[RMDB]
RNA sequence: GGGAACGACUCGAGUAGAGUCGAAAACGCCCAUGUGGUAGGUGUCGGGACUCACUUUUAGUGGGCUACGCCUCUCACCCUCCGUCUGUGGGUGAAGGAAGAGAUUUAUCAGACUAGCCUUACGGAAGCCUGUCGCUGGGCUGAAGUAACGGCGAAAGCGUCGGGUUACGUUCGCGUAACCCGACGCAAAAGAAACAACAACAACAAC
Reactivity to 2A3 in 0.01 (KOAc 150mM, MgCl2 10mM, bicine 150mM(pH8.5), 24C), signal-to-noise 1, nucleotides 027 to 156: c070g050c000c000c030a010u080g100u130g080g070u070a030g000g020u100g040u120c140g010g010g130a090c000u010c090a010c060u050u110u020u140a030g010u010g000g000g050c010u000a000c000g000c000c000u010c020u000c000a000c000c000c000u000c000c000g000u000c000u000g000u000g010g000g000u000g010a010a010g010g000a000a000g010a000g040a020u100u220u200a050u070c000a000g000a000c000u000a030g030c000c000u000u010a000c010g000g050a040a010g000c000c000u170g180u280c040g070c300u210g000g000g100c020u020g000a000a000g000u000a000a020c160g000g000c000g000a030a040a020